[RMDB]
RNA sequence: GGGAACGACUCGAGUAGAGUCGAAAACUGAUUCGUUCGCGAAUCAGAAAAAAGAUAUGGAUAUGUUAGCGUCGAUAAGCUCUGGUCGGAAACGACCAAGAGCUUUUGACGACGCUACAUAUCCUAAGUCAAAAACCAUGCCUUUCGAGGCAUGGAACGACCUGAAAUCUUUCGAGAUUUCAGGUCGAAAAGAAACAACAACAACAAC
Reactivity to 2A3 in 0.01 (KOAc 150mM, MgCl2 10mM, bicine 150mM(pH8.5), 24C), signal-to-noise 1, nucleotides 027 to 156: c000u000g000a010u010u000c000g040u050u180c300g000c010g130a010a020u010c000a020g250a030a060a000a000a000a040g010a020u040a010u100g000g020a000u000a000u000g050u200u100a010g000c000g000u000c040g020a060u060a300a000g000c020u020c000u010g000g000u000c010g060g000a040a030a020c010g010a000c000c000a000a000g010a010g000c000u020u000u000u000g010a010c010g000a000c000g000c010u000a000c000a000u000a000u000c000c000u000a000a010g010u000c020a000a000a000a110a110c000c000a010u000g000c000c020u150u070u120c300g180a040g000g000c000a000u000g000g020a040a010